[RMDB]
RNA sequence: GGGAACGACUCGAGUAGAGUCGAAAACUGGUUAAUUCCGAUAACGAACGAGAUCUUAACCUGCUAAUUAGCGGCGAGUACACUGUACUUGCUGCUUCUUAGAGGAACAUUGUGUGUCUAACACAAGGAAGUUUAAGGCAACAACAGGUCUGUGAUGCACGAUAUUAUCCUUCGGGAUAAUAUCGUGAAAAGAAACAACAACAACAAC
Reactivity to 2A3 in 0.01 (KOAc 150mM, MgCl2 10mM, bicine 150mM(pH8.5), 24C), signal-to-noise 7, nucleotides 027 to 156: c040u060g030g040u080u090a060a050u200u020c030c020g020a100u090a180a090c080g030a020a010c060g040a040g000a080u030c000u050u050a040a060c010c010u100g170c000u090a000a010u000u000a000g000c000g010g010c000g000a000g000u010a010c300a120c170u300g000u010a000c030u000u000g000c000u000g000c000u000u000c000u000u000a010g000a010g010g030a010a030c040a080u060u040g030u000g010u000g050u070c050u110a090a010c030a020c040a110a050g110g050a120a050g010u020u060u160a050a020g030g000c020a020a020c010a010a010c010a060g030g020u000c040u040g070u090g060a090u160g050
Reactivity to DMS in 0.01 (KOAc 150mM, MgCl2 10mM, bicine 150mM(pH8.5), 24C), signal-to-noise 4, nucleotides 027 to 156: c040u000g000g030u010u010a080a190u000u010c030c010g010a160u010a070a130c070g000a090a150c060g000a090g000a060u010c000u000u010a080a070c010c000u010g020c010u000a040a060u000u000a010g010c020g020g000c000g010a010g020u000a010c000a250c160u010g030u000a000c000u000u010g020c000u000g000c000u000u000c010u000u000a000g000a090g020g010a080a100c050a170u000u010g020u000g020u000g000u010c120u000a070a060c030a020c010a060a080g010g010a070a270g010u000u000u010a040a060g010g000c040a080a060c030a050a050c070a040g010g000u000c020u010g020u000g010a130u000g000

An RNA of 207 nucleotides, treated with 2A3 and DMS and read out base by base. For DMS the reverse transcriptase was MarathonRT. For 2A3, 5,853 sequencing reads were counted. Source: RMDB library PDB130, as collected in RNAgym. Conditions: 150 mM KOAc, 10 mM MgCl2 and 150 mM bicine (pH 8.5), 24 C. Values cover nucleotides 27 to 156.